[RMDB]
RNA sequence: GGGAACGACUCGAGUAGAGUCGAAAACAUGACGAGUUCGCUCGUCAUGAAAGAAAGAAAGAUAGUCUGAAGCGCCAGACUUGCGCAAAAGAAAGAAAGAAAAAAGCAAACUCUUCGGAGUUUGCAACCAUAUCCACUUCUUCGGAAGUGGAUAUGGAAAAGAAACAACAACAACAAC
Reactivity to 2A3 in 0.01 (KOAc 150mM, MgCl2 10mM, bicine 150mM(pH8.5), 24C), signal-to-noise 1, nucleotides 027 to 126: c000a010u000g000a010c010g000a010g010u050u090c140g050c100u010c010g010u000c000a000u010g000a010a000a030g040a000a070a000g060a030a100a030g050a070u130a080g020u000c000u050g040a110a010g050c040g010c060c010a050g030a240c000u020u100g010c060g000c010a070a020a020a000g080a040a140a010g080a040a100a010g060a000a190a010a000a010a000g010c000a000a000a020c010u000c020u020u070c210g100g000a020g000u010u000u000g000c010a000a000
Reactivity to DMS in 0.01 (KOAc 150mM, MgCl2 10mM, bicine 150mM(pH8.5), 24C), signal-to-noise 1, nucleotides 027 to 126: c020a000u000g010a010c000g000a000g000u000u030c290g000c010u000c000g010u020c000a000u010g000a050a060a180g000a100a070a110g000a110a150a130g000a080u010a050g000u020c000u000g000a150a130g000c040g050c080c080a130g000a100c130u000u000g000c080g000c080a000a040a150a090g010a040a100a100g010a090a080a180g030a000a010a040a090a120a030g000c000a000a000a010c010u010c000u000u010c160g010g010a020g020u000u000u000g010c000a010a030
Structure probing data (2A3 and DMS) for a 177-nucleotide construct. The DMS profile rests on 885 reads. DMS adducts were read by reverse transcription with MarathonRT. 2A3 adducts were read by reverse transcription with SuperScript II with manganese.